[RMDB]
RNA sequence: GGGAACGACUCGAGUAGAGUCGAAAAGAUAUGGAUCAAUCAAGCAUGACCAAUGAUGUCGGAAACGAUUGAGGUCAUGAACUACUUGCUUGAUCCUAAGUCAAAGUCUAAACUUCGGUUUAGACAAGAACAAGUAAAACUUCGGUUUUACUUGUUCAAAAGAAACAACAACAACAAC
Reactivity to 2A3 in 0.01 (KOAc 150mM, MgCl2 10mM, bicine 150mM(pH8.5), 24C), signal-to-noise 4, nucleotides 027 to 126: g020a010u070a010u160g000g000a010u000c000a000a000u000c010a010a000g000c000a010u020g000a000c000c000a030a260u240g070a060u170g030u020c010g010g050a080a050a030c010g000a020u010u060g040a020g000g000u000c010a000u000g000a000a030c020u120a040c000u040u000g000c010u000u000g000a010u000c000c000u010a090a000g000u000c040a090a070a050g000u010c000u010a010a000a020c010u050u120c300g110g000u010u000u000a000g000a010c000a000a020
Reactivity to DMS in 0.01 (KOAc 150mM, MgCl2 10mM, bicine 150mM(pH8.5), 24C), signal-to-noise 7, nucleotides 027 to 126: g000a020u000a300u000g000g010a010u000c000a000a010u000c010a000a020g010c000a010u000g000a010c000c000a120a210u010g030a100u000g010u000c000g010g000a090a080a180c010g010a010u000u000g000a170g010g010u010c000a000u000g010a040a030c090u020a300c010u000u000g010c140u000u000g020a000u000c000c000u010a010a090g000u000c040a120a100a130g000u000c000u000a000a000a000c000u000u010c200g030g000u000u000u000a000g000a010c000a050a060
The record gives the reactivity of an RNA of 177 nucleotides to 2A3 and DMS. Values cover nucleotides 27 to 126. The DMS profile rests on 8,914 reads. The data come from the RNA Mapping Database (RMDB), library TTRDEL.